This 177-nucleotide RNA was probed chemically with DMS and 2A3. For DMS the reverse transcriptase was MarathonRT. The RNA was probed in 150 mM KOAc, 10 mM MgCl2 and 150 mM bicine (pH 8.5) at 24 C. Values cover nucleotides 27 to 126.
RNA sequence: GGGAACGACUCGAGUAGAGUCGAAAAAGAGGAAAGAAGGACGCGAGACGCAAACCUGUGAGUGGACACCCGCUUUAUUCACUGGGGACGACAACUCUGGGGAGAAAAGGGAGGAUCGGAUGGGAAGGCUAUAUGUCCUGUUCGCAGGACAUAUAGCAAAAGAAACAACAACAACAAC
Reactivity to DMS in 0.01 (KOAc 150mM, MgCl2 10mM, bicine 150mM(pH8.5), 24C), signal-to-noise 2, nucleotides 027 to 126: a090g020a070g000g010a030a080a070g010a030a120g020g020a080c120g010c150g010a040g010a090c080g030c100a080a130a190c070c010u010g000u000g010a040g030u000g010g000a120c070a150c070c040c090g000c140u000u010u000a050u010u010c070a070c080u000g010g000g000g000a100c070g000a130c150a030a060c050u010c030u000g000g000g000g010a140g000a010a040a060a110g000g020g000a000g010g000a060u000c080g000g000a080u000g000g000g010a040a090g020
Reactivity to 2A3 in 0.01 (KOAc 150mM, MgCl2 10mM, bicine 150mM(pH8.5), 24C), signal-to-noise 1, nucleotides 027 to 126: a010g040a020g000g000a010a040a070g040a060a000g010g010a000c000g000c010g070a040g030a010c050g070c050a000a100a040c000c000u020g010u050g060a010g000u000g030g010a010c020a060c040c010c010g040c050u040u120u090a120u060u060c050a010c080u060g000g000g000g040a020c040g000a000c000a080a030c030u020c010u050g010g030g000g010a040g050a020a100a000a000g010g000g000a040g030g040a060u040c050g050g000a010u040g050g020g000a020a030g030